The record gives the reactivity of an RNA of 177 nucleotides to 2A3 and DMS. Source: RMDB library OK2TST, as collected in RNAgym. For DMS, 2,103 sequencing reads were counted. 2A3 adducts were read by reverse transcription with SuperScript II with manganese.
[RMDB]
RNA sequence: GGGAACGACUCGAGUAGAGUCGAAAAUGGACGACACGGGCCUCACGGUGCUGCGAAUCCUCUCGCAGCGCAGCAACGACGAGGUGGCCAAGGAGUUCGUGAAGCUCAAGUCGGACACGCGCUCCGCUGUAGCGGUGCGAUUCGUCGCACCGCUACAAAAAGAAACAACAACAACAAC
Reactivity to 2A3 in 0.01 (KOAc 150mM, MgCl2 10mM, bicine 150mM(pH8.5), 24C), signal-to-noise 1, nucleotides 027 to 126: u040g000g020a000c030g000a000c020a020c100g020g050g000c010c000u000c000a010c000g010g000u040g010c000u010g030c000g020a030a100u180c060c060u110c000u010c040g000c050a010g000c010g000c000a010g000c000a000a050c030g140a010c020g030a030g080g050u100g110g000c000c000a010a020g010g010a000g000u010u030c020g000u030g010a040a000g010c000u010c050a040a120g040u080c010g000g040a010c010a010c040g040c000g000c010u020c020c010g010c090
Reactivity to DMS in 0.01 (KOAc 150mM, MgCl2 10mM, bicine 150mM(pH8.5), 24C), signal-to-noise 3, nucleotides 027 to 126: u000g020g000a040c020g020a050c050a160c300g010g000g010c010c020u000c040a110c010g000g010u000g020c000u000g000c000g000a050a100u020c110c140u010c100u000c020g020c030a060g000c020g020c020a030g000c080a120a080c010g010a170c080g000a140g000g000u000g010g030c000c050a070a200g020g000a190g000u000u010c020g020u000g000a090a080g010c000u000c030a260a200g010u010c000g000g000a130c010a020c110g010c090g010c030u000c000c040g010c160